[RMDB]
RNA sequence: GGGAACGACUCGAGUAGAGUCGAAAAUUGGAAAUAUUUAAAGGUGAUCAAAUUGCACUUGUAGGUCCAAGCGGGGCAGGUAAAUCCACUUUGACACAUCUUAUUGCAGGUGUUUAUCAGCCAACAAACCUGUUAUAUCAUUCGUGAUAUAACAGGUAAAAGAAACAACAACAACAAC
Reactivity to 2A3 in 0.01 (KOAc 150mM, MgCl2 10mM, bicine 150mM(pH8.5), 24C), signal-to-noise 9, nucleotides 027 to 126: u050u030g050g090a050a060a040u240a160u120u220u210a150a190a070g050g010u040g020a040u080c110a040a080a120u170u170g000c010a010c030u020u030g010u050a040g040g040u000c020c020a020a000g010c060g030g020g020g000c070a080g030g170u200a050a050a030u030c010c000a010c030u030u030u040g040a020c030a010c010a180u080c080u130u180a180u140u160g010c020a000g000g010u020g010u030u010u010a070u040c030a010g100c020c010a050a050c060a050a190
Reactivity to DMS in 0.01 (KOAc 150mM, MgCl2 10mM, bicine 150mM(pH8.5), 24C), signal-to-noise 8, nucleotides 027 to 126: u010u010g000g000a060a040a070u020a040u020u030u020a060a060a060g000g000u000g010a090u020c140a070a080a090u020u020g000c020a020c030u000u000g010u000a050g010g000u000c020c030a030a030g010c100g000g010g000g010c050a040g000g010u020a020a050a080u010c110c020a050c040u000u010u020g010a080c120a090c140a070u020c110u020u030a070u020u020g010c080a030g000g010u010g010u000u000u010a040u010c030a040g000c030c020a060a070c190a040a080